RNA sequence: GGGAACGACUCGAGUAGAGUCGAAAACACAGACAGUCUCACUGUCUCUGAGUGACACUGACAGACUGUCACAGAGAGUGUCUCUGACUGAGACACUGAGUCAGAGUCUGACACUGAGUGACUGAGACUAAACACUUCAAUUCGUUGAAGUGUUUAGAAAAGAAACAACAACAACAAC
Reactivity to DMS in 0.01 (KOAc 150mM, MgCl2 10mM, bicine 150mM(pH8.5), 24C), signal-to-noise 9, nucleotides 027 to 126: c060a130c180a100g010a120c140a040g000u000c020u000c020a080c160u000g010u000c010u000c040u000g000a100g020u000g000a090c080a050c110u000g010a110c080a070g010a120c070u000g010u000c070a070c090a090g010a150g010a040g010u000g000u000c000u000c000u000g010a140c240u010g010a030g000a030c030a020c030u000g010a110g010u000c040a050g000a080g010u000c050u000g000a130c040a060c040u000g000a080g010u000g000a060c020u000g000a080g010a150
Reactivity to 2A3 in 0.01 (KOAc 150mM, MgCl2 10mM, bicine 150mM(pH8.5), 24C), signal-to-noise 9, nucleotides 027 to 126: c090a000c010a010g150a080c030a020g030u000c010u000c030a040c060u060g010u030c010u000c030u100g130a060g050u040g020a020c010a020c140u070g080a030c010a040g090a060c040u040g020u100c030a010c020a030g130a000g020a000g010u020g010u000c000u000c010u050g190a210c110u090g020a010g020a030c020a020c040u030g010a010g020u010c010a010g010a010g120u010c050u050g020a020c010a010c050u070g090a020g040u040g010a010c020u030g020a010g030a030